[RMDB]
RNA sequence: GGGAACGACUCGAGUAGAGUCGAAAACGCGGCGCUCUCCCAGCAGCGGAGGACCCAGGACUAUCCCUUCGGCGAGACGGAUGGAAACCGAGCCCCCUGGAGGACCUGCCCCUGCAGUUCUGCCUCACUGUGAAUGAUAGUUCGCUAUCAUUCACAGAAAAGAAACAACAACAACAAC
Reactivity to 2A3 in 0.01 (KOAc 150mM, MgCl2 10mM, bicine 150mM(pH8.5), 24C), signal-to-noise 2, nucleotides 027 to 126: c030g010c020g050g000c030g000c030u020c020u010c010c020c000a040g030c050a010g030c050g020g020a010g030g020a050c020c000c010a020g010g050a030c040u070a100u150c030c000c000u040u060c060g040g010c050g040a070g050a070c030g030g000a050u080g050g040a130a060a030c030c020g020a030g050c010c020c010c000c000u010g030g000a050g020g040a070c000c010u040g060c010c000c020c000u030g020c000a000g020u100u000c040u090g030c000c010u030c010a100
Reactivity to DMS in 0.01 (KOAc 150mM, MgCl2 10mM, bicine 150mM(pH8.5), 24C), signal-to-noise 6, nucleotides 027 to 126: c100g020c070g000g010c050g020c060u010c040u000c000c000c020a190g010c070a070g020c210g000g010a080g010g010a160c040c030c030a070g010g010a100c080u010a080u000c040c020c030u000u000c040g010g010c070g010a080g000a120c220g010g000a070u000g000g000a060a080a100c060c030g000a080g000c010c030c020c020c020u010g000g010a060g000g010a080c090c030u000g000c030c040c050c070u000g000c030a080g000u000u000c070u010g000c040c040u000c090a200
An RNA of 177 nucleotides, treated with 2A3 and DMS and read out base by base. 2A3 is a SHAPE reagent: it acylates the 2'-hydroxyl of flexible nucleotides of all four kinds. The reactions ran in a buffer of 150 mM KOAc, 10 mM MgCl2 and 150 mM bicine (pH 8.5), at 24 C. For DMS, 7,461 sequencing reads were counted. For DMS the reverse transcriptase was MarathonRT. For 2A3, 5,080 sequencing reads were counted. 2A3 adducts were read by reverse transcription with SuperScript II with manganese.